[RMDB]
RNA sequence: GGGAACGACUCGAGUAGAGUCGAAAAGAUAUGGAAAUGCUCCGGGAGGUGGUCGGAAACGACCAUACCGAGGAUCGGACAUUUCCUAAGUCAAAGUGAGAAAAAUCCUUCGGGAUUUUUCUCACAACAUAUACUCGUUGUUCGCAACGAGUAUAUGAAAAGAAACAACAACAACAAC
Reactivity to DMS in 0.01 (KOAc 150mM, MgCl2 10mM, bicine 150mM(pH8.5), 24C), signal-to-noise 4, nucleotides 027 to 126: g010a050u000a300u010g000g000a010a000a000u000g010c270u000c000c000g000g000g000a060g010g050u000g010g010u010c000g000g010a080a090a170c000g010a010c000c000a050u010a030c010c000g020a090g020g000a040u020c010g000g010a040c000a000u000u000u000c000c000u000a020a060g000u000c030a090a120a130g010u000g010a010g000a000a010a000a020a010u000c000c000u000u010c220g020g010g000a000u000u000u000u000u010c000u000c000a000c000a070a090
Reactivity to 2A3 in 0.01 (KOAc 150mM, MgCl2 10mM, bicine 150mM(pH8.5), 24C), signal-to-noise 3, nucleotides 027 to 126: g020a030u090a060u130g000g020a000a010a010u030g070c150u040c000c020g000g020g010a020g000g020u020g010g000u010c020g020g010a100a060a020c010g000a000c000c020a020u120a050c000c000g050a300g030g000a020u010c020g030g010a000c010a010u000u000u000c000c000u010a150a010g000u010c050a140a110a030g010u030g000a030g010a010a020a000a010a010u030c040c030u140u270c300g010g000g000a000u000u000u010u000u020c000u000c000a010c000a000a000

This 177-nucleotide RNA was probed chemically with DMS and 2A3. High 2A3 reactivity points to a flexible backbone, as in loops and unpaired stretches. The RNA was probed in 150 mM KOAc, 10 mM MgCl2 and 150 mM bicine (pH 8.5) at 24 C. The 2A3 profile rests on 7,164 reads. Values cover nucleotides 27 to 126.